[RMDB]
RNA sequence: GGGAACGACUCGAGUAGAGUCGAAAAGGUUGCACCAAAUGUCCCACCAGGUGCAGGCAGAAAACGCUGGAACAGCGUGUACAGUUUGUCUUAACAAAAAGUGAGGGCGCUGAGGUCGAGCAGGGUGACCUCCGAUAAAUUUCGAUUUAUCGGAGGUAAAAGAAACAACAACAACAAC
Reactivity to DMS in 0.01 (KOAc 150mM, MgCl2 10mM, bicine 150mM(pH8.5), 24C), signal-to-noise 9, nucleotides 027 to 126: g010g020u010u010g010c020a050c010c020a080a120a110u000g010u000c010c000c010a120c180c140a140g010g010u000g010c020a050g010g010c050a070g000a080a060a110a040c050g000c010u000g000g020a090a170c080a030g010c010g020u000g010u010a100c120a100g010u000u000u000g010u000c090u000u000a100a070c100a040a030a050a070a070g020u010g010a090g000g010g010c050g010c050u010g010a070g010g010u000c040g000a070g000c050a060g000g000g010u000g010
Reactivity to 2A3 in 0.01 (KOAc 150mM, MgCl2 10mM, bicine 150mM(pH8.5), 24C), signal-to-noise 4, nucleotides 027 to 126: g070g030u090u070g010c010a000c010c000a020a070a060u110g040u020c000c000c000a010c030c050a050g030g000u010g000c000a010g020g010c010a000g060a070a140a010a010c020g000c000u040g090g090a170a110c040a030g000c020g000u030g060u130a060c040a110g010u030u070u040g000u060c020u080u130a140a040c070a060a060a020a030a020g070u080g030a080g030g040g020c040g000c050u030g050a030g070g000u060c020g020a000g010c020a040g020g050g020u040g040